[RMDB]
RNA sequence: GGGAACGACUCGAGUAGAGUCGAAAAGAUAUGGACCGUGAACUACUCGGACGAAACCUCCAACAGCUUUCGCUCGGAAACGAGCGAAAGACAUGGAGACUGACGGUACGAGCACGGUCCUAAGUCAGGAAUUAAACUACUUCGGUAGUUUAAUUCCAAAAGAAACAACAACAACAAC
Reactivity to 2A3 in 0.01 (KOAc 150mM, MgCl2 10mM, bicine 150mM(pH8.5), 24C), signal-to-noise 2, nucleotides 027 to 126: g060a030u120a000u130g000g000a000c000c000g020u020g000a060a070c030u300a070c000u300c040g010g030a040c010g070a110a040a000c040c000u000c020c020a170a090c070a240g040c000u010u020u000c010g040c000u000c000g040g020a100a100a050c010g010a020g020c030g000a000a000a000g000a000c000a050u130g000g000a000g010a000c080u080g220a050c000g150g100u300a030c020g000a020g040c030a000c000g000g000u000c010c000u000a000a000g030u000c040a020
Reactivity to DMS in 0.01 (KOAc 150mM, MgCl2 10mM, bicine 150mM(pH8.5), 24C), signal-to-noise 2, nucleotides 027 to 126: g000a080u020a300u010g000g000a000c000c000g030u000g000a040a060c050u010a300c040u000c020g060g000a300c100g010a040a250a120c150c020u000c000c000a010a060c300a150g010c000u020u020u000c000g010c000u000c000g000g020a170a130a130c020g010a010g030c000g000a010a000a000g000a010c130a280u020g050g000a030g000a060c130u000g010a270c020g020g000u000a070c000g000a050g010c000a030c000g000g000u000c000c020u020a020a110g000u030c050a100